[RMDB]
RNA sequence: GGGAACGACUCGAGUAGAGUCGAAAAGAUAUGGAUUUUAUCGAUAAGCUGGUGUCGGAAACGACACCCAGCUUUUGACGAUGGAUCCUAAGUCAAACGACUAGAGGGCUUCGGCCCUCUAGUCGAAGUCAGAUACAGUGUUCGCACUGUAUCUGACAAAAGAAACAACAACAACAAC
Reactivity to 2A3 in 0.01 (KOAc 150mM, MgCl2 10mM, bicine 150mM(pH8.5), 24C), signal-to-noise 1, nucleotides 027 to 126: g000a010u030a010u110g030g000a000u020u070u200u300a000u220c020g030a070u020a290a080g000c000u000g010g060u020g010u010c020g020g050a060a060a000c000g000a000c010a000c030c020c000a000g000c010u030u050u030u060g010a040c000g000a000u010g000g000a000u000c000c000u020a090a020g010u000c040a130a090a110c000g010a010c010u000a000g010a020g030g000g030c080u100u210c300g060g040c060c020c000u020c000u000a010g000u000c000g000a000a000
Reactivity to DMS in 0.01 (KOAc 150mM, MgCl2 10mM, bicine 150mM(pH8.5), 24C), signal-to-noise 1, nucleotides 027 to 126: g000a020u000a250u000g000g010a010u000u000u010u010a000u000c010g000a080u010a020a020g010c000u000g000g020u010g020u000c000g000g010a060a080a110c000g000a010c010a000c190c170c120a000g000c000u000u000u000u000g020a160c090g000a000u000g000g010a010u000c000c000u000a050a130g010u020c020a060a060a300c020g030a010c000u000a000g000a010g000g000g060c000u000u000c280g020g000c000c000c010u000c000u000a000g000u000c000g000a020a050
Structure probing data (2A3 and DMS) for a 177-nucleotide construct. The reactions ran in a buffer of 150 mM KOAc, 10 mM MgCl2 and 150 mM bicine (pH 8.5), at 24 C. For DMS the reverse transcriptase was MarathonRT. For DMS, 1,181 sequencing reads were counted. The 2A3 profile rests on 1,453 reads.